[RMDB]
The record gives the reactivity of an RNA of 170 nucleotides to DMS and 2A3. High 2A3 reactivity points to a flexible backbone, as in loops and unpaired stretches. The reactions ran in a buffer of 150 mM KOAc, 10 mM MgCl2 and 150 mM bicine (pH 8.5), at 24 C. For 2A3, 2,853 sequencing reads were counted. It was measured as part of the RMDB library 15KLIB. Reactivities are given for positions 27 through 129. Values are in units of 0.01, from 0 to 300, in steps of 10. For DMS, 5,544 sequencing reads were counted.
RNA sequence: GGGAACGACUCGAGUAGAGUCGAAAAUGACAGUUAUUCUGUCAUGCUAUGUGGUGAUAAUUCUGCUAAGUUUUGGGAAGAGGCAUUCUAUAGAGAUCUCUAUAGUUCGCCUACCACUUUGCAGGCUCGGGGUCCCGCUUCGGCGGGACCAAAAGAAACAACAACAACAAC
Reactivity to DMS in 0.01 (KOAc 150mM, MgCl2 10mM, bicine 150mM(pH8.5), 24C), signal-to-noise 3, nucleotides 027 to 129: u000g030a000c000a080g060u030u070a070u090u000c020u000g000u000c010a000u040g060c110u020a050u050g060u030g020g050u120g040a160u020a100a080u070u040c010u000g070c020u030a020a050g010u000u000u040u030g090g000g030a290a160g010a080g060g010c000a080u000u020c020u040a000u010a010g040a020g000a200u090c130u020c000u000a010u000a040g010u000u050c100g010c070c000u030a000c030c010a080c030u000u020u000g010c000a010g040g010c000u010c090g050g000
Reactivity to 2A3 in 0.01 (KOAc 150mM, MgCl2 10mM, bicine 150mM(pH8.5), 24C), signal-to-noise 3, nucleotides 027 to 129: u000g000a000c000a020g000u020u120a160u250u250c000u000g020u000c000a000u050g000c010u080a210u130g040u070g040g040u060g060a070u080a160a030u090u000c010u000g000c000u000a010a010g020u100u040u190u260g060g020g030a200a140g080a080g250g000c010a050u000u000c000u000a000u000a000g030a020g020a160u060c060u000c000u230a000u000a000g000u010u020c020g000c000c000u010a010c030c000a010c000u000u020u020g000c010a000g000g010c000u000c000g040g000